[RMDB]
RNA sequence: GGGAACGACUCGAGUAGAGUCGAAAAGCAAUUAAAACAUAAACCUUAUGGGACAUGUGCUUUUAUUAGGCUAAAACCAAGUGAUCGCAAGAUCGUUAUAUUGGUUGAACUCUAGAUAAAAUGCAGAUUGUACAAAUAAAUUCGUUUAUUUGUACAAAAAAGAAACAACAACAACAAC
Reactivity to 2A3 in 0.01 (KOAc 150mM, MgCl2 10mM, bicine 150mM(pH8.5), 24C), signal-to-noise 9, nucleotides 027 to 126: g040c020a050a100u140u160a150a090a070a030c060a060u140a080a150a060c020c010u140u140a110u290g030g030g030a020c040a080u140g030u040g050c000u010u010u010u000a010u020u010a000g010g000c000u020a060a000a000a020c000c000a020a010g050u040g100a000u010c010g000c030a040a030g010a020u010c000g010u080u050a150u040a060u170u020g000g000u000u000g000a010a000c010u000c000u010a030g030a160u010a010a010a010a030u200g010c010a010g030a160
Reactivity to DMS in 0.01 (KOAc 150mM, MgCl2 10mM, bicine 150mM(pH8.5), 24C), signal-to-noise 9, nucleotides 027 to 126: g020c100a110a100u030u030a060a060a120a100c050a040u000a080a120a210c030c010u010u030a100u030g010g010g010a170c200a040u000g000u000g010c020u000u000u000u000a020u010u000a030g000g000c030u000a060a080a010a010c000c000a000a010g010u020g010a010u000c000g000c300a100a120g000a000u000c000g010u020u030a090u040a130u000u000g000g000u000u000g000a070a170c240u000c010u010a040g020a030u000a010a020a020a020u050g010c010a090g000a150